RNA sequence: GGGAACGACUCGAGUAGAGUCGAAAAGGCGUGCUAUUGAACUUAAUGGAAUUACGUGGCGCUGAUCUUCAGGAACAGAAAAUGCAUCUUUAAAAUGGACGACGCCGAUCGUAUCGUCUAGGUCGCCCUUGCCAAACGCUUUCGAGCGUUUGGCAAGAAAAGAAACAACAACAACAAC
Reactivity to DMS in 0.01 (KOAc 150mM, MgCl2 10mM, bicine 150mM(pH8.5), 24C), signal-to-noise 1, nucleotides 027 to 126: g030g010c050g050u010g000c070u000a080u020u000g020a120a110c110u020u010a070a090u000g020g010a070a140u010u000a080c050g080u020g000g000c020g000c020u010g020a130u000c020u000u000c130a030g010g000a030a040c090a050g030a070a070a060a100u000g000c060a030u020c030u000u020u000a050a050a100a080u000g050g010a090c030g000a060c010g010c020c100g000a080u010c080g000u000a140u010c050g010u000c020u000a050g000g000u000c050g010c040c030
Reactivity to 2A3 in 0.01 (KOAc 150mM, MgCl2 10mM, bicine 150mM(pH8.5), 24C), signal-to-noise 1, nucleotides 027 to 126: g000g010c050g070u020g000c060u210a180u160u300g070a110a070c020u030u140a050a040u160g200g040a060a110u140u040a040c010g000u060g000g040c010g000c040u000g020a090u030c000u150u190c040a040g060g030a040a040c070a080g110a080a120a000a030u110g010c000a020u000c000u050u080u070a100a250a100a070u100g000g020a030c000g000a000c000g080c060c010g020a070u130c010g050u110a090u060c000g000u000c090u000a030g070g000u020c030g020c000c000